RNA sequence: GGGAACGACUCGAGUAGAGUCGAAAAGUAGGGGACACUUCCCACUGAGGGUUUCCCGGCGUAAGUUCCUGAACAAUUUGCGGAAAUUGGUGUGGGUCGUAUUGUCCCCCCCUCUCCGCCAGAUUGAAAGCGCUCAAAAUUUCGAUUUUGAGCGCUUAAAAGAAACAACAACAACAAC
Reactivity to 2A3 in 0.01 (KOAc 150mM, MgCl2 10mM, bicine 150mM(pH8.5), 24C), signal-to-noise 1, nucleotides 027 to 126: g140u100a060g020g000g090g010a000c000a030c010u040u040c000c000c000a010c030u000g000a230g030g130g000u010u060u030c000c000c020g110g070c050g040u100a040a010g030u040u000c000c030u060g030a070a030c000a020a080u080u000u020g060c050g060g050a080a090a090u170u100g070g020u040g050u170g020g010g000u000c000g030u200a140u180u100g000u040c000c000c000c000c000c000c000u000c000u000c000c000g070c090c000a040g030a050u020u050g050a030
Reactivity to DMS in 0.01 (KOAc 150mM, MgCl2 10mM, bicine 150mM(pH8.5), 24C), signal-to-noise 2, nucleotides 027 to 126: g000u020a040g050g000g010g020a060c040a150c000u040u020c040c050c020a090c120u020g010a070g000g000g050u010u000u010c000c000c070g010g050c090g000u010a030a170g010u000u000c010c010u040g010a090a120c080a100a060u000u000u010g020c040g030g000a070a010a090u000u000g000g050u010g000u000g000g040g000u010c030g010u080a190u080u130g010u000c050c000c000c010c040c000c120u000c050u030c000c010g020c130c140a070g010a070u000u010g010a120

Conditions: 150 mM KOAc, 10 mM MgCl2 and 150 mM bicine (pH 8.5), 24 C. An RNA of 177 nucleotides, treated with 2A3 and DMS and read out base by base. The 2A3 profile rests on 558 reads. DMS adducts were read by reverse transcription with MarathonRT.